[RMDB]
RNA sequence: GGGAACGACUCGAGUAGAGUCGAAAACUCCAUAUUGUGCUGUAGCGUCUAUUGCGCAUUUUGCGCCGUUUCCUUCAAAAAGCAAUAUAAAGGGGUUGCUUGAACUGGAUGUUAUCCUAUCGCACGCAGAUACUCACUCCUUCGGGAGUGAGUAUCUAAAAGAAACAACAACAACAAC
Reactivity to 2A3 in 0.01 (KOAc 150mM, MgCl2 10mM, bicine 150mM(pH8.5), 24C), signal-to-noise 1, nucleotides 027 to 126: c000u020c020c000a030u110a060u240u190g020u020g010c020u020g010u050a010g040c020g030u000c020u040a170u080u220g000c020g060c020a080u130u180u230u300g000c020g020c010c000g030u000u050u070c000c000u040u180c120a010a090a050a030a000g000c020a010a010u080a020u100a150a110a040g060g040g040g040u020u010g000c000u020u060g030a050a090c080u080g000g030a020u020g080u120u050a040u120c030c030u050a080u080c030g000c040a030c040g050c030
Reactivity to DMS in 0.01 (KOAc 150mM, MgCl2 10mM, bicine 150mM(pH8.5), 24C), signal-to-noise 1, nucleotides 027 to 126: c120u000c030c040a130u000a110u000u000g010u010g010c020u000g020u020a040g010c070g030u000c010u000a100u000u020g000c010g030c000a220u010u000u040u010g050c000g020c000c020g020u000u000u000c000c010u000u010c170a050a090a080a090a040g000c010a010a010u010a100u010a100a120a110g020g000g000g000u000u000g000c000u000u000g010a090a050c250u000g000g010a010u000g010u000u000a080u000c060c060u000a100u010c240g020c020a050c120g000c240